[RMDB]
RNA sequence: GGGAACGACUCGAGUAGAGUCGAAAAACGAGUGAGUUACGACUCACUCGACUUUUAAUGCUACCCAAAGGUCGUGACCAGUCGAUAAAACGCAGAGUCAAAAAGUCCGACGUUACGACGUCGGACAACGAGCGAGUUCUGUUCGCAGAACUCGCAACUUAUGAAGACUGUUCGCAGUCUUCAUAAGAAAAGAAACAACAACAACAAC
Reactivity to DMS in 0.01 (KOAc 150mM, MgCl2 10mM, bicine 150mM(pH8.5), 24C), signal-to-noise 2, nucleotides 027 to 156: a070c000g020a000g040u050g030a010g050u010u010a100c230g070a140c000u000c000a010c000u000c020g010a000c090u000u000u000u010a030a030u020g000c000u010a020c030c050c030a060a090a120g000g020u000c000g000u000g010a300c020c010a160g010u000c040g040a100u000a060a110a180a050c050g040c080a230g000a180g010u020c050a160a090a060a080a120g020u000c000c000g030a010c010g010u000u000a170c270g030a130c030g020u000c000g030g000a010c000a000a030c090g000a090g000c030g020a030g010u000u000c000u000g000u020u000c250g070c050a000g000a020a020c000u000c000g050c000a000a020
Reactivity to 2A3 in 0.01 (KOAc 150mM, MgCl2 10mM, bicine 150mM(pH8.5), 24C), signal-to-noise 3, nucleotides 027 to 156: a000c010g000a000g000u010g010a000g020u040u090a120c260g050a040c020u010c000a000c000u000c000g000a010c000u010u030u020u120a150a110u130g020c030u050a080c000c030c000a050a070a040g060g010u030c000g010u010g030a060c010c010a040g100u100c060g040a090u110a170a090a030a030c090g000c120a040g050a030g210u200c100a110a080a010a050a000g010u030c010c010g000a000c010g000u000u030a050c290g020a000c010g050u010c020g000g010a000c000a010a010c000g020a000g000c010g000a000g000u000u000c000u010g030u060u070c220g010c100a000g000a000a000c000u000c000g000c000a000a000